[RMDB]
RNA sequence: GGGAACGACUCGAGUAGAGUCGAAAAAGGAGGUUGUCGGAGGUGACGCGGCAGCUCAUAGCGGCGAAGCUCGCCCGCGGCGAGAGAGCCUUGCUCGUAGCCUCUGAGCCUAUGAGCGACGAGCCCACUAGGAUCUGUGUUUCGACACAGAUCCUAGAAAAGAAACAACAACAACAAC
Reactivity to 2A3 in 0.01 (KOAc 150mM, MgCl2 10mM, bicine 150mM(pH8.5), 24C), signal-to-noise 2, nucleotides 027 to 126: a000g280g030a030g020g040u120u140g270u170c000g040g040a050g020g020u040g030a000c030g020c110g060g030c020a020g010c010u000c030a040u090a050g000c080g050g020c040g040a170a030g060c040u020c080g040c060c060c040g090c030g050g010c070g000a100g000a000g000a010g040c000c030u080u130g000c030u070c010g040u000a020g040c000c000u000c010u000g000a000g010c000c000u080a120u160g060a070g010c070g060a130c070g000a030g060c020c010c010a060
Reactivity to DMS in 0.01 (KOAc 150mM, MgCl2 10mM, bicine 150mM(pH8.5), 24C), signal-to-noise 3, nucleotides 027 to 126: a100g020g010a050g020g000u000u010g000u000c040g020g010a030g030g000u000g010a050c050g010c200g020g020c050a120g000c010u000c030a140u010a220g000c020g000g000c020g010a130a150g010c090u010c040g000c030c040c070g020c100g000g010c030g000a070g000a130g010a110g000c020c130u000u000g050c020u000c000g010u000a250g010c010c010u010c020u000g010a050g000c010c000u000a030u000g010a030g000c030g010a080c110g000a180g000c020c010c000a240